[RMDB]
RNA sequence: GGGAACGACUCGAGUAGAGUCGAAAAGAACCACAACUUGAGCACCCAUCACAGGGUGGCCUCCCGGAAAUUGAGGAGUACCAGAAUUGCUCAGACUUUGGCGAGAGACGGAGGCUCUGCGAAGCACGUCCCAAGCAAUGUUCGCAUUGCUUGGGACAAAAGAAACAACAACAACAAC
Reactivity to 2A3 in 0.01 (KOAc 150mM, MgCl2 10mM, bicine 150mM(pH8.5), 24C), signal-to-noise 2, nucleotides 027 to 126: g020a060a050c020c010a040c040a110a130c060u040u050g020a010g030c010a040c010c020c000a040u130c050a040c030a070g000g000g000u020g010g040c010c020u000c000c000c000g040g070a180a280a050u150u150g070a130g020g010a030g040u020a120c020c010a030g100a120a200u160u130g000c010u010c030a030g110a140c020u130u080u050g090g000c070g030a070g010a010g010a110c020g050g060a020g040g000c000u040c000u000g000c030g010a060a020g050c050a020c150
Reactivity to DMS in 0.01 (KOAc 150mM, MgCl2 10mM, bicine 150mM(pH8.5), 24C), signal-to-noise 2, nucleotides 027 to 126: g040a110a140c080c010a110c050a060a080c140u000u000g020a040g000c040a080c010c000c030a060u010c300a120c280a160g010g000g010u000g010g010c300c000u000c020c030c020g010g000a090a080a200u010u000g010a160g040g020a100g000u000a080c030c020a050g000a030a170u000u000g020c020u000c040a040g010a070c050u000u010u000g010g020c060g000a080g010a110g020a080c150g000g000a090g030g000c020u000c020u050g010c200g020a020a020g010c050a030c140
An RNA of 177 nucleotides, treated with 2A3 and DMS and read out base by base. Conditions: 150 mM KOAc, 10 mM MgCl2 and 150 mM bicine (pH 8.5), 24 C. The data come from the RNA Mapping Database (RMDB), library OK2TRN. DMS adducts were read by reverse transcription with MarathonRT. For DMS, 840 sequencing reads were counted.